[RMDB]
RNA sequence: GGGAACGACUCGAGUAGAGUCGAAAAGGCUGUGUUGUGGCGGGGGCGAAACAGGAUCGACAAGGGUGUAAAGAUCGCUCUUUUACUCGGCAUGAUACCACCGUUAUCGGGUCCACAGAGUAGUUGCUAGGGGAACGGGUGUUCGCACCCGUUCCAAGUCAUAAGAGGUAUUCGUACCUCUUAUGACAAAAGAAACAACAACAACAAC
Reactivity to DMS in 0.01 (KOAc 150mM, MgCl2 10mM, bicine 150mM(pH8.5), 24C), signal-to-noise 2, nucleotides 027 to 156: g030g020c020u000g040u010g020u000u010g020u000g030g010c010g000g000g030g040g030c050g020a100a060a100c090a130g010g030a070u000c020g000a090c060a090a090g000g020g030u000g000u000a070a120a110g000a120u000c040g020c060u000c020u020u000u010u000a100c050u000c030g030g000c020a110u010g020a120u010a050c030c030a040c010c000g020u010u000a080u000c040g040g000g000u000c000c040a130c040a050g010a040g010u000a100g000u000u000g000c010u000a160g010g000g010g020a020a000c000g020g000g000u000g000u010u010c300g000c000a020c010c020c000g020u000u000c000c010a010a110
Reactivity to 2A3 in 0.01 (KOAc 150mM, MgCl2 10mM, bicine 150mM(pH8.5), 24C), signal-to-noise 3, nucleotides 027 to 156: g070g010c050u050g000u000g000u090u020g030u050g030g020c030g010g000g020g000g010c040g000a030a030a000c060a030g040g020a060u070c030g050a060c070a060a070g030g040g010u070g010u100a070a080a030g080a050u100c040g020c040u030c020u010u110u020u040a090c040u030c010g020g010c020a010u060g010a000u040a030c020c020a010c010c040g080u050u060a050u090c040g010g000g010u000c000c010a050c020a020g030a010g010u060a000g000u020u010g020c020u090a040g160g000g030g000a000a000c000g010g000g000u000g000u020u020c110g040c020a010c010c000c010g000u000u000c000c000a000a000
Structure probing data (DMS and 2A3) for a 207-nucleotide construct.
For 2A3 the reverse transcriptase was SuperScript II with manganese.
Conditions: 150 mM KOAc, 10 mM MgCl2 and 150 mM bicine (pH 8.5), 24 C.
DMS (dimethyl sulfate) methylates the pairing face of unpaired adenines and cytosines.